[RMDB]
Source: RMDB library OK2TST, as collected in RNAgym.
The record gives the reactivity of an RNA of 177 nucleotides to DMS and 2A3.
For 2A3 the reverse transcriptase was SuperScript II with manganese.
The reactions ran in a buffer of 150 mM KOAc, 10 mM MgCl2 and 150 mM bicine (pH 8.5), at 24 C.
For 2A3, 2,062 sequencing reads were counted.
RNA sequence: GGGAACGACUCGAGUAGAGUCGAAAAUUGUGGCUGUGUCACUAUCGGCGAUCGACUACAACCACAUCAUUUUGUGUGCUCAAGCCGUGCGUUUGCUCCAUACCGUGGUCUUUAUGCCUCUGCGGAAACGCACUGCAUACUUCGGUAUGCAGUGCGUAAAAGAAACAACAACAACAAC
Reactivity to DMS in 0.01 (KOAc 150mM, MgCl2 10mM, bicine 150mM(pH8.5), 24C), signal-to-noise 2, nucleotides 027 to 126: u000u010g020u000g000g030c020u000g020u000g000u000c030a120c210u000a090u000c020g010g010c060g010a130u010c120g000a010c020u010a030c020a020a040c000c000a020c020a010u030c210a080u010u000u010u020g010u000g000u000g000c020u000c040a110a140g030c010c010g000u000g000c060g020u000u000u000g000c060u020c050c030a050u000a080c050c030g010u000g010g000u010c070u000u000u000a090u040g000c070c040u000c050u000g000c050g000g010a080a050
Reactivity to 2A3 in 0.01 (KOAc 150mM, MgCl2 10mM, bicine 150mM(pH8.5), 24C), signal-to-noise 2, nucleotides 027 to 126: u030u030g010u010g040g000c020u010g010u020g010u090c010a030c060u040a120u210c050g090g040c020g090a140u110c120g000a050c030u250a010c040a050a000c020c000a030c010a020u070c040a050u060u090u040u080g110u020g060u060g040c010u020c030a020a080g000c000c040g020u040g020c010g030u030u090u110g030c010u000c030c020a040u040a150c040c010g020u040g020g060u060c040u110u140u040a110u160g020c020c040u000c020u020g030c010g050g000a080a040